[RMDB]
RNA sequence: GGGAACGACUCGAGUAGAGUCGAAAAGGUGUAUGACAACAAUGGCAGGAGUGCGGGUCUGGCUAUGGUUUCCCUGGUUGCCAGCCCGGAAGGACGGAUGACGCAGGGUGAGACCCGGAUGGUCAUGCAACCGCAACUGGUUCGCCAGUUGCGGUUGAAAAGAAACAACAACAACAAC
Reactivity to 2A3 in 0.01 (KOAc 150mM, MgCl2 10mM, bicine 150mM(pH8.5), 24C), signal-to-noise 1, nucleotides 027 to 126: g000g020u030g000u010a070u230g110a020c060a150a000c070a030a100u000g020g070c110a060g100g000a010g040u150g050c000g000g040g000u040c060u010g080g000c050u080a060u210g110g010u030u040u000c030c000c000u000g090g030u020u150g000c010c010a030g020c010c000c000g000g020a030a030g100g010a020c130g050g040a040u100g020a030c060g000c060a000g000g040g040u140g020a040g080a010c000c000c000g000g010a060u150g010g000u030c000a000u000g020
Reactivity to DMS in 0.01 (KOAc 150mM, MgCl2 10mM, bicine 150mM(pH8.5), 24C), signal-to-noise 1, nucleotides 027 to 126: g000g060u000g010u030a040u000g000a040c080a050a120c060a120a060u000g030g010c000a050g000g000a060g000u020g000c030g000g020g000u030c000u000g000g030c000u020a090u060g020g080u000u020u020c050c000c000u000g020g000u000u010g000c040c000a020g000c040c020c010g000g000a070a120g000g020a120c070g010g020a070u000g000a040c100g000c050a100g000g000g000u000g020a070g000a300c030c060c070g000g000a110u010g010g000u000c010a020u080g000
The record gives the reactivity of an RNA of 177 nucleotides to 2A3 and DMS. It was measured as part of the RMDB library OK1LIB. For 2A3 the reverse transcriptase was SuperScript II with manganese. For 2A3, 534 sequencing reads were counted. The reactions ran in a buffer of 150 mM KOAc, 10 mM MgCl2 and 150 mM bicine (pH 8.5), at 24 C. DMS adducts were read by reverse transcription with MarathonRT.